An RNA of 177 nucleotides, treated with DMS and 2A3 and read out base by base. Values cover nucleotides 27 to 126. The RNA was probed in 150 mM KOAc, 10 mM MgCl2 and 150 mM bicine (pH 8.5) at 24 C. The 2A3 profile rests on 25,056 reads.
RNA sequence: GGGAACGACUCGAGUAGAGUCGAAAAGCGCGCCCUGGACGAACGCGUGGCUCAGCGGAUGCCGAAAGCGCGAGUCGCUUACGUGCAGCGGCCCGGCGAGCCGGUGAUUGUGCUCGGCGCGCCGGAAGCACCUAAAUGAUUUCGAUCAUUUAGGUGCAAAAGAAACAACAACAACAAC
Reactivity to DMS in 0.01 (KOAc 150mM, MgCl2 10mM, bicine 150mM(pH8.5), 24C), signal-to-noise 6, nucleotides 027 to 126: g000c010g010c010g010c010c010c030u000g010g010a030c010g010a030a060c030g000c010g020u020g040g010c010u000c000a110g010c010g000g000a150u010g020c010c000g000a070a070a090g010c000g020c010g010a090g020u010c150g020c140u010u010a080c040g020u000g010c050a160g010c070g010g000c050c010c000g000g010c050g010a020g010c010c000g010g020u000g000a100u000u000g020u000g000c010u000c260g000g010c000g020c010g020c010c020g000g000a110a150
Reactivity to 2A3 in 0.01 (KOAc 150mM, MgCl2 10mM, bicine 150mM(pH8.5), 24C), signal-to-noise 8, nucleotides 027 to 126: g010c000g000c000g000c000c000c000u010g030g070a010c020g020a050a010c010g010c070g110u140g010g000c000u000c010a030g050c030g030g020a080u260g010c010c000g060a170a110a030g010c010g000c020g010a010g050u130c070g010c180u090u120a070c020g030u040g010c010a040g080c020g020g020c000c010c000g240g300c020g000a000g000c000c000g000g000u020g000a070u020u060g010u040g110c000u000c010g000g000c000g000c000g000c000c000g010g030a060a020